Notes
Structure probing data (DMS and 2A3) for a 177-nucleotide construct.
RNA sequence: GGGAACGACUCGAGUAGAGUCGAAAAGGAGGUUGGAUCAAAGUGCGUAAUCAGUGGUCCCUAAAUAACCCAUUGCAUUGGCUAUUUCAAAGAAUUAUAUACAUAGGGAUCUCUUCAUGAGAUAGUCCAUCAUUCCGAGAUUCGUCUCGGAAUGAUGAAAAGAAACAACAACAACAAC
Reactivity to DMS in 0.01 (KOAc 150mM, MgCl2 10mM, bicine 150mM(pH8.5), 24C), signal-to-noise 3, nucleotides 027 to 126: g000g010a060g010g020u020u000g000g010a090u000c050a080a100a110g030u010g030c100g010u000a140a070u010c050a090g030u010g010g000u000c010c000c060u020a010a110a070u010a090a140c050c020c010a080u010u000g020c160a080u010u000g000g000c020u000a020u020u000u000c020a040a060a080g000a040a060u010u000a090u010a150u010a070c070a130u020a080g020g020g000a020u000c070u000c070u000u000c150a080u000g010a020g000a020u010a010g010u000c030
Reactivity to 2A3 in 0.01 (KOAc 150mM, MgCl2 10mM, bicine 150mM(pH8.5), 24C), signal-to-noise 2, nucleotides 027 to 126: g080g070a030g090g060u100u120g060g000a040u000c040a070a060a080g050u040g030c010g090u090a030a110u140c010a070g020u040g040g020u050c040c000c010u090a140a150a050u080a040a080c000c060c030a050u000u230g050c050a060u000u110g000g020c000u020a030u010u070u030c030a000a120a000g000a070a040u270u060a030u010a010u030a260c030a030u090a070g140g000g020a020u050c000u030c000u040u110c010a080u030g010a010g000a020u010a010g020u000c020

For 2A3 the reverse transcriptase was SuperScript II with manganese. The data come from the RNA Mapping Database (RMDB), library OK2TRN. Reactivities are given for positions 27 through 126.